Source information
The record gives the reactivity of an RNA of 207 nucleotides to 2A3 and DMS. For DMS the reverse transcriptase was MarathonRT. For 2A3 the reverse transcriptase was SuperScript II with manganese.

[RMDB]
RNA sequence: GGGAACGACUCGAGUAGAGUCGAAAACAGAGCUAAUGAGCCACAUACCUACCCAAGGUGAAAGCUCCUUCUCUCGCAAUGUGUAACCCAUGAUUCUCAUGACCCCUGGUUGGAGAGAUCCGGACUAUAGACUAGAGGGUGUUCGCACCCUCUAGAAGUUAGUCUAAUCCUUCGGGAUUAGACUAACAAAAGAAACAACAACAACAAC
Reactivity to 2A3 in 0.01 (KOAc 150mM, MgCl2 10mM, bicine 150mM(pH8.5), 24C), signal-to-noise 2, nucleotides 027 to 156: c030a010g020a000g000c030u050a080a040u090g020a030g010c030c020a060c030a130u260a040c000c010u030a040c040c010c030a040a030g050g000u050g040a030a030a030g030c020u000c000c040u040u030c010u000c010u010c030g080c110a090a130u090g090u040g000u140a080a050c000c000c020a000u090g040a110u150u090c080u030c100a080u180g130a140c000c020c030c110u040g040g030u040u050g030g010a040g010a000g010a110u000c050c020g040g020a010c030u070a050u130a300g060a040c010u000a000g000a000g020g010g000u000g000u010u010c050g020c020a030c000c000c000u000c000u000a000g000a000a000
Reactivity to DMS in 0.01 (KOAc 150mM, MgCl2 10mM, bicine 150mM(pH8.5), 24C), signal-to-noise 2, nucleotides 027 to 156: c060a070g020a120g010c090u000a090a100u000g020a070g030c010c010a070c070a180u000a090c040c010u000a090c050c040c040a150a070g020g000u000g000a120a180a060g000c000u000c040c040u000u000c020u000c000u000c030g010c070a110a070u000g030u010g000u000a070a030c040c010c000a050u000g030a150u000u010c040u000c030a120u010g000a140c000c010c010c020u000g010g040u000u000g020g010a120g000a080g000a060u000c060c090g030g000a180c090u000a090u000a120g000a140c000u010a040g000a020g000g050g010u000g040u000u000c300g010c030a040c010c000c000u000c000u000a000g030a030a120